This 207-nucleotide RNA was probed chemically with 2A3.
The RNA was probed in 150 mM KOAc, 10 mM MgCl2 and 150 mM bicine (pH 8.5) at 24 C.
[RMDB]
RNA sequence: GGGAACGACUCGAGUAGAGUCGAAAACGCUGGGUGUCUGGGAGUUGGACCGCAGACAUGUAUAUACCUGAAGCGCGCACGGGUAUAUACAACAGCUGUUAGUACAACGAAGAACAGACACCUGUGCUGAAGCGCGCACGGCAACCGAAAGGUGCGAGCAUUGUUAGACGUUCGCGUCUAACAAUGCAAAAGAAACAACAACAACAAC
Reactivity to 2A3 in 0.01 (KOAc 150mM, MgCl2 10mM, bicine 150mM(pH8.5), 24C), signal-to-noise 2, nucleotides 027 to 156: c040g010c020u050g030g000g000u010g000u000c000u010g020g000g010a030g000u010u000g010g000a000c000c010g010c010a040g120a240c070a160u030g000u010a000u000a000u010a000c000c000u040g030a300a030g030c010g000c020g020c020a010c020g020g000g000u000a010u000a000u000a000c020a030a010c040a120g060c000u010g010u030u070a020g000u010a000c000a000a010c010g070a280a040g000a000a000c000a000g000a010c000a000c000c000u000g010u030g000c050u120g030a070a020g000c000g000c010g000c020a000c020g100g000c020a130a230c080c020g060a110a020a040g030g000u020g000c020g020a030
It was measured as part of the RMDB library RNAMAK. For 2A3, 2,229 sequencing reads were counted.